[RMDB]
RNA sequence: GGGAACGACUCGAGUAGAGUCGAAAAGCCAGCGCGCAUGCGGCCAUGCGGGAAAGCGUCCGUCGGCUGGAUGCUAUCGCGGCCGAACUCGACCGCGCGGUUCCGGAUCAGGAUCAGCUUGCCGUCGUCUUGAGACGGACUUCGGUCCGUCUCAAGAAAAAGAAACAACAACAACAAC
Reactivity to DMS in 0.01 (KOAc 150mM, MgCl2 10mM, bicine 150mM(pH8.5), 24C), signal-to-noise 1, nucleotides 027 to 126: g000c020c010a120g010c020g060c040g030c080a150u020g010c000g000g010c030c000a140u000g040c050g000g000g010a030a080a060g030c010g010u020c000c020g000u000c130g000g040c080u000g000g000a060u010g030c040u020a070u010c040g000c020g000g010c010c000g000a110a100c170u090c070g000a110c220c030g000c020g000c100g000g010u030u000c020c000g000g000a080u000c110a100g000g000a010u000c020a140g000c060u000u000g010c050c010g010u020c030g000
Reactivity to 2A3 in 0.01 (KOAc 150mM, MgCl2 10mM, bicine 150mM(pH8.5), 24C), signal-to-noise 3, nucleotides 027 to 126: g020c000c020a010g000c010g010c000g000c020a080u150g050c000g010g000c000c040a150u180g000c020g010g060g060a180a300a000g000c010g030u000c000c000g060u070c040g060g000c010u060g040g020a000u040g020c020u110a090u150c060g020c000g010g000c000c000g000a080a060c010u020c080g070a060c040c040g000c000g000c000g020g010u100u020c020c010g030g030a050u090c060a040g070g030a070u060c040a030g020c010u070u150g030c010c000g020u030c030g040
The record gives the reactivity of an RNA of 177 nucleotides to DMS and 2A3.
The DMS profile rests on 1,590 reads.
For DMS the reverse transcriptase was MarathonRT.
It was measured as part of the RMDB library OK1LIB.